An RNA of 207 nucleotides, treated with DMS and 2A3 and read out base by base. For 2A3 the reverse transcriptase was SuperScript II with manganese. For DMS, 1,835 sequencing reads were counted. The data come from the RNA Mapping Database (RMDB), library OK3TST. For 2A3, 1,232 sequencing reads were counted. The reactions ran in a buffer of 150 mM KOAc, 10 mM MgCl2 and 150 mM bicine (pH 8.5), at 24 C. DMS adducts were read by reverse transcription with MarathonRT.

RNA sequence: GGGAACGACUCGAGUAGAGUCGAAAAGCAUGAGUUUGGAGGUAUGCAGCCAGCUGUAUCCUAGCCUGUGACUGAGAAAGGCUAAAACUCAGUAGCAAACCUACUUCCAUGGCUCUAACUGAAACAAAGGUUUUCUAGUUUGUCUUUAGGGUCAUAAAGUAUAGUGGACGUUCGCGUCCACUAUACUAAAAGAAACAACAACAACAAC
Reactivity to DMS in 0.01 (KOAc 150mM, MgCl2 10mM, bicine 150mM(pH8.5), 24C), signal-to-noise 1, nucleotides 027 to 156: g010c010a030u000g000a060g040u000u000u020g040g060a160g000g000u010a080u000g030c060a200g030c050c050a130g090c010u010g050u000a300u000c040c000u020a050g000c060c000u000g000u000g000a090c060u010g000a010g020a040a100a300g010g000c000u000a040a070a050a070c020u020c020a070g040u000a100g070c040a040a100a100c010c020u000a090c040u020u000c010c050a080u010g050g000c000u000c000u010a080a020c100u000g010a100a090a030c070a110a090a130g030g010u000u000u000u050c070u000a180g000u000u000u000g000u010c010u000u000u000a030g000g000g000u000c020a010u020a040a090
Reactivity to 2A3 in 0.01 (KOAc 150mM, MgCl2 10mM, bicine 150mM(pH8.5), 24C), signal-to-noise 2, nucleotides 027 to 156: g000c010a010u010g000a000g060u070u070u030g110g060a070g040g000u190a020u040g000c000a010g040c070c020a090g110c050u020g010u070a020u020c000c000u040a040g000c010c000u090g050u180g150a160c130u190g020a020g130a170a120a010g060g000c020u030a000a000a060a000c020u030c010a020g130u140a020g010c000a010a060a040c000c000u010a030c030u100u050c070c040a040u030g000g000c000u020c000u000a040a070c080u050g040a110a040a010c020a030a070a050g090g000u090u180u150u090c050u030a110g120u060u010u090g040u030c000u030u010u000a010g000g010g000u010c000a000u040a000a140